[RMDB]
Annotation:
The record gives the reactivity of an RNA of 177 nucleotides to 2A3 and DMS. As a SHAPE reagent, 2A3 marks flexible, mostly unpaired nucleotides at the ribose 2'-OH. The reactions ran in a buffer of 150 mM KOAc, 10 mM MgCl2 and 150 mM bicine (pH 8.5), at 24 C. The data come from the RNA Mapping Database (RMDB), library OK1LIB. DMS adducts were read by reverse transcription with MarathonRT. For 2A3, 4,223 sequencing reads were counted.
RNA sequence: GGGAACGACUCGAGUAGAGUCGAAAAAAUGGGCCUUGGUGAUGCAAUUGGGCCUUUAAUUUAUGGGCUUUGAGUAUUGGACUUUGUAUAUUGGGCCUACUUAAAAUAAUUCAAAUGGGCAGGAAUAGCUUAUGAAUUAAUUCGUUAAUUCAUAAGCAAAAGAAACAACAACAACAAC
Reactivity to 2A3 in 0.01 (KOAc 150mM, MgCl2 10mM, bicine 150mM(pH8.5), 24C), signal-to-noise 4, nucleotides 027 to 126: a000a030u080g010g030g030c030c020u050u050g130g020u070g050a090u060g030c020a060a090u140u080g010g020g010c000c000u020u010u040a070a030u060u070u060a140u110g000g010g020c000u050u040u080g040a010g030u050a150u100u110g050g010a060c000u080u130u040g080u090a060u050a100u180u120g020g010g000c000c000u000a020c000u020u030a050a030a040a050u150a050a030u090u040c040a000a010a090u110g000g010g000c040a030g100g040a110a090u050a050
Reactivity to DMS in 0.01 (KOAc 150mM, MgCl2 10mM, bicine 150mM(pH8.5), 24C), signal-to-noise 4, nucleotides 027 to 126: a050a080u010g000g010g010c030c000u000u010g010g020u010g000a040u020g010c060a060a070u010u000g000g000g010c000c010u000u010u020a050a080u030u020u030a050u040g000g000g020c040u010u020u010g000a100g000u010a050u020u020g000g020a080c030u010u000u020g010u030a050u030a090u020u010g000g000g010c000c010u000a030c080u000u020a040a040a060a080u050a040a090u010u010c070a020a070a060u010g020g000g000c030a070g000g000a130a070u010a110